[RMDB]
RNA sequence: GGGAACGACUCGAGUAGAGUCGAAAAGCUCAGACCGGCGCGGAGGUGUAGCGAUAGGACAGCAGCGUUUUCACCAGGAAGGUGAUCUGGGUGGCCGAGCGCGCAUCCACGCGCAUGACCGGGAUGCGCGCAGUAACUGCUUCGGCAGUUACUGCGCAAAAGAAACAACAACAACAAC
Reactivity to 2A3 in 0.01 (KOAc 150mM, MgCl2 10mM, bicine 150mM(pH8.5), 24C), signal-to-noise 6, nucleotides 027 to 126: g020c010u010c040a020g040a080c000c020g030g000c000g000c010g010g030a090g010g020u030g020u050a130g030c010g010a060u090a080g020g020a020c000a020g030c000a010g020c080g070u090u030u050u070c020a020c000c010a020g240g170a200a080g010g050u020g010a010u000c010u030g280g080g060u010g060g000c000c030g010a070g080c010g000c000g000c000a010u000c010c010a030c010g010c000g000c010a020u060g020a030c010c000g020g000g020a020u050g030c020
Reactivity to DMS in 0.01 (KOAc 150mM, MgCl2 10mM, bicine 150mM(pH8.5), 24C), signal-to-noise 5, nucleotides 027 to 126: g010c030u010c010a090g020a130c060c010g010g000c010g020c030g000g000a240g010g020u010g010u010a080g020c010g000a160u020a120g000g000a030c040a050g010c030a040g000c300g010u010u010u010u000c020a030c000c010a250g010g000a120a130g000g030u010g000a030u010c020u010g010g000g020u000g000g000c010c010g000a080g010c020g010c010g000c000a030u010c020c170a080c010g000c030g000c120a060u020g020a120c140c050g000g000g010a030u000g000c150

Conditions: 150 mM KOAc, 10 mM MgCl2 and 150 mM bicine (pH 8.5), 24 C. An RNA of 177 nucleotides, treated with 2A3 and DMS and read out base by base. DMS adducts were read by reverse transcription with MarathonRT. The data come from the RNA Mapping Database (RMDB), libraries RFM100 and RFMREP.